RNA sequence: GGGAACGACUCGAGUAGAGUCGAAAACAGUCGUGCGCCAUGCCUGAUGCGACGCUUUGCGCGUCUUAUCAGGCCUACGGCUUACGGGCGAAGUGUAGGCCGGAUAAGGCGUUCACGCCGCAUCCGGAUCCUUAGACCAAUUCGUUGGUCUAAGGAUAAAAGAAACAACAACAACAAC
Reactivity to DMS in 0.01 (KOAc 150mM, MgCl2 10mM, bicine 150mM(pH8.5), 24C), signal-to-noise 9, nucleotides 027 to 126: c140a130g010u000c020g010u000g010c150g010c010c020a100u010g000c000c000u000g000a010u000g010c130g000a010c000g010c160u010u010u000g020c140g010c000g010u000c000u000u000a000u000c000a020g000g000c000c030u000a020c040g010g020c010u000u000a040c080g020g000g020c080g010a070a090g010u010g010u000a030g000g000c000c000g000g000a020u000a040a150g000g010c000g010u000u000c120a050c030g010c010c000g000c180a030u000c000c060g000g000
Reactivity to 2A3 in 0.01 (KOAc 150mM, MgCl2 10mM, bicine 150mM(pH8.5), 24C), signal-to-noise 9, nucleotides 027 to 126: c020a010g080u050c010g040u060g040c120g070c050c020a070u120g020c000c010u010g000a000u010g010c010g010a020c010g010c090u120u150u240g070c090g000c000g010u000c000u000u000a010u000c000a000g000g000c000c000u010a000c000g070g000c000u010u020a060c110g090g100g020c140g090a120a040g030u040g020u180a020g020g020c010c000g000g000a010u020a030a020g000g000c010g000u040u030c030a020c020g010c000c000g000c010a010u010c010c020g000g020